[RMDB]
RNA sequence: GGGAACGACUCGAGUAGAGUCGAAAAAGCAUAAAGAAGCUCAAUCGUAUUCUGACACUUGAGCAGUUACCAGAUGAGAGAUUAUUGAAAGAGAUGAUAGAACUAUGCAAGUAAAGGAAUAUGCUUUAUAUAAAGGAGAAGAACUACUGGCUAUGGGAACGCACAAGAUUUUCGAAUCUUGUGCGUUAAAAGAAACAACAACAACAAC
Reactivity to 2A3 in 0.01 (KOAc 150mM, MgCl2 10mM, bicine 150mM(pH8.5), 24C), signal-to-noise 3, nucleotides 027 to 156: a000g010c030a020u080a040a090a030g090a070a000g020c010u000c040a040a090u040c040g030u080a110u090u030c030u040g030a020c020a010c100u050u070g000a030g050c010a000g020u030u030a060c020c050a040g010a090u130g010a020g010a000g000a080u010u090a060u210u280g060a060a070a010g040a020g030a020u070g010a020u080a080g030a030a000c030u040a040u180g030c030a010a040g010u080a140a050a010g030g030a050a020u020a030u070g000c000u090u090u040a150u030a010u060a070a050a010g010g000a050g020a080a040g030a050a010c010u040a030c030u050g010g020c010u040a070u070g010g000g050
Reactivity to DMS in 0.01 (KOAc 150mM, MgCl2 10mM, bicine 150mM(pH8.5), 24C), signal-to-noise 2, nucleotides 027 to 156: a030g000c020a040u010a050a120a160g020a170a140g000c030u010c070a050a140u020c040g000u000a090u010u010c030u000g020a240c090a060c020u000u010g000a040g010c020a130g000u000u010a040c010c000a150g020a020u000g050a180g010a070g010a110u000u010a080u010u020g040a030a110a170g010a110g000a060u000g010a160u000a070g010a060a110c030u000a040u000g000c030a070a040g000u020a070a070a230g020g000a050a100u010a030u000g020c060u000u000u000a090u000a120u010a090a030a080g020g000a170g020a070a060g030a010a050c020u000a050c050u000g010g000c000u000a100u010g010g000g000

This 207-nucleotide RNA was probed chemically with 2A3 and DMS.
For DMS the reverse transcriptase was MarathonRT.
For DMS, 2,506 sequencing reads were counted.
The 2A3 profile rests on 1,726 reads.
For 2A3 the reverse transcriptase was SuperScript II with manganese.